[RMDB]
RNA sequence: GGGAACGACUCGAGUAGAGUCGAAAAUAGCUGCAACAUUAUUUGAGUAUCCUGAAAACGGGCUUUUCAGAAUGGUGUUGCCGUAUAAAAUUGUAGGAGUGCAUAGUUGCCCGUAUAGCAGGCAUUAGAGAGCUACAGAUGUUCGCAUCUGUAGCAAGUUAGUUGUUCAGUUCGCUGAACAACUAACAAAAGAAACAACAACAACAAC
Reactivity to 2A3 in 0.01 (KOAc 150mM, MgCl2 10mM, bicine 150mM(pH8.5), 24C), signal-to-noise 3, nucleotides 027 to 156: u130a020g020c010u000g020c020a010a000c010a040u000u040a030u020u070u040g010a010g040u100a100u130c010c030u050g040a030a020a020a060c120g010g010g000c000u050u040u100u080c050a050g040a100a030u010g020g000u010g010u000u010g000c000c020g000u040a080u060a100a120a030a090u170u110g040u070a060g020g040a050g030u060g010c040a040u040a100g050u070u060g000c000c000c010g020u060a040u040a080g070c060a010g000g010c000a000u010u080a030g080a030g010a010g080c000u000a000c000a000g030a010u010g000u050u090c150g010c080a010u010c000u010g000u000a000g010c000a000a000
Reactivity to DMS in 0.01 (KOAc 150mM, MgCl2 10mM, bicine 150mM(pH8.5), 24C), signal-to-noise 2, nucleotides 027 to 156: u000a120g000c030u010g000c010a040a070c010a030u000u010a070u000u000u000g010a230g030u000a040u000c000c010u010g000a030a040a080a120c050g000g030g030c110u010u010u000u000c020a100g010a050a020u010g010g000u000g000u000u000g010c010c040g000u000a080u000a050a070a080a130u000u010g020u000a100g000g000a130g010u000g030c030a100u000a110g010u000u000g000c000c010c030g010u010a110u010a130g020c070a020g000g030c020a030u000u000a150g000a200g000a150g000c000u000a000c000a030g000a050u000g010u000u000c300g020c020a020u000c000u010g020u010a010g030c000a000a040